[RMDB]
RNA sequence: GGGAACGACUCGAGUAGAGUCGAAAAUGUGUAUAAAUUCAUGGGGUACACGUGCAAUUUUGCUAUACUGAUAUUACAUUGUGAUGAAGUCUGGGCCUUCAGUGCAUCCAUCACUGAAGCAAUGCACGUUGUACCCUCCAAGCAACCUCUCAUCAUCGUAGAGUACGAGUUUCGACUCGUACUCUACAAAAGAAACAACAACAACAAC
Reactivity to DMS in 0.01 (KOAc 150mM, MgCl2 10mM, bicine 150mM(pH8.5), 24C), signal-to-noise 1, nucleotides 027 to 156: u000g020u010g050u010a300u010a040a060a140u000u010c090a070u050g020g030g020g050u000a000c000a050c010g050u000g030c030a050a190u000u000u020u010g000c010u010a150u000a220c080u050g030a170u010a140u000u000a170c060a090u000u010g040u000g040a100u010g030a050a020g000u000c040u010g000g040g080c220c120u000u020c010a080g060u010g010c090a170u030c110c060a050u000c010a030c010u020g000a090a150g010c110a030a040u010g010c040a040c020g000u000u000g010u000a010c030c000c000u000c030c080a000a160g070c080a080a050c030c010u000c000u010c050a150u010c110a100u000c140
Reactivity to 2A3 in 0.01 (KOAc 150mM, MgCl2 10mM, bicine 150mM(pH8.5), 24C), signal-to-noise 4, nucleotides 027 to 156: u060g030u010g030u020a030u110a250a180a100u190u130c060a040u090g000g020g000g020u000a000c010a000c000g000u000g000c030a130a180u060u080u110u160g050c010u040a060u060a180c080u080g110a050u050a060u210u070a070c130a190u170u220g020u040g060a010u030g030a060a040g020u010c030u080g050g060g030c040c090u050u060c020a010g030u040g060c020a110u050c070c010a050u110c000a000c020u000g030a010a000g000c020a010a020u030g000c000a000c000g000u010u030g000u010a000c000c000c000u000c000c000a000a000g040c010a040a120c010c020u030c000u030c050a220u060c010a030u090c100

Chemical mapping of a 207-nucleotide RNA with DMS and 2A3. For 2A3 the reverse transcriptase was SuperScript II with manganese. DMS adducts were read by reverse transcription with MarathonRT. Conditions: 150 mM KOAc, 10 mM MgCl2 and 150 mM bicine (pH 8.5), 24 C. Reactivities are given for positions 27 through 156. The data come from the RNA Mapping Database (RMDB), library OK3TST. For 2A3, 1,929 sequencing reads were counted.